Structure probing data (2A3) for a 207-nucleotide construct.
Reactivities are given for positions 27 through 156.
The reactions ran in a buffer of 150 mM KOAc, 10 mM MgCl2 and 150 mM bicine (pH 8.5), at 24 C.
The 2A3 profile rests on 553 reads.

RNA sequence: GGGAACGACUCGAGUAGAGUCGAAAAACCUCGAGGAGACAAUGGAGAUACAGCCUGCAGCAAUGAAAUUGGAGUUGGUGUUUCCAAAGCUUCCUGCUGCUGUUCUCUGGGUAAAGCCUGGGGUACUCCUUGUGAGAUGUGUCCUGCUGUGAACACAUCACCCAGCAACAUUCGUGUUGCUGGGUGAAAAAGAAACAACAACAACAAC
Reactivity to 2A3 in 0.01 (KOAc 150mM, MgCl2 10mM, bicine 150mM(pH8.5), 24C), signal-to-noise 1, nucleotides 027 to 156: a010c010c000u010c040g140a060g040g020a020g040a020c090a090a270u200g020g000a060g000a050u170a070c000a000g010c000c120u050g000c000a010g010c010a030a280u180g070a110a160a090u060u000g010g000a010g030u090u050g130g080u160g050u100u160u000c010c000a030a050a000g030c020u080u030c030c000u010g030c010u000g000c000u000g040u080u010c000u000c000u000g000g000g020u080a080a060a000g120c000c000u000g020g000g030g030u070a080c020u040c000c000u010u000g100u040g050a150g000a030u060g000u000g010u040c010c030u070g020c040u050g000u000g100a020a000c130a020c070a020